Source: RMDB library ARCHII, as collected in RNAgym. This 207-nucleotide RNA was probed chemically with 2A3. Reactivities are given for positions 27 through 156. The RNA was probed in 150 mM KOAc, 10 mM MgCl2 and 150 mM bicine (pH 8.5) at 24 C.
RNA sequence: GGGAACGACUCGAGUAGAGUCGAAAAGGCGUUGGCUGGCCUCCUAAAAAGCCAACAAAACAAUAAAUGCCGAACCUAAGGCUGAAUGCGAAAUUAUUAGCUUGUUUGACUCAGUAGAGGAAAGACUAGCUGCUUAAUUAGCAAAAGUUGUUAGCUACAUCUUCAUCCAGUUCGCUGGAUGAAGAUGAAAAGAAACAACAACAACAAC
Reactivity to 2A3 in 0.01 (KOAc 150mM, MgCl2 10mM, bicine 150mM(pH8.5), 24C), signal-to-noise 1, nucleotides 027 to 156: g020g020c000g030u030u000g020g010c010u030g070g040c000c000u070c000c010u160a090a080a040a020a000g070c030c020a020a000c030a020a090a000a000c010a020a130u250a300a050a050u090g010c010c030g060a070a090c020c010u110a070a000g000g000c020u030g090a050a050u110g020c000g030a050a040a020u000u000a000u000u030a060g010c000u000u070g020u000u030u030g050a030c020u020c030a170g080u170a120g300a010g010g000a110a030a000g000a010c030u060a000g010c000u000g000c010u020u010a040a030u000u030a010g000c000a000a000a000a130g000u000u000g020u030u050a030g030c000u030a030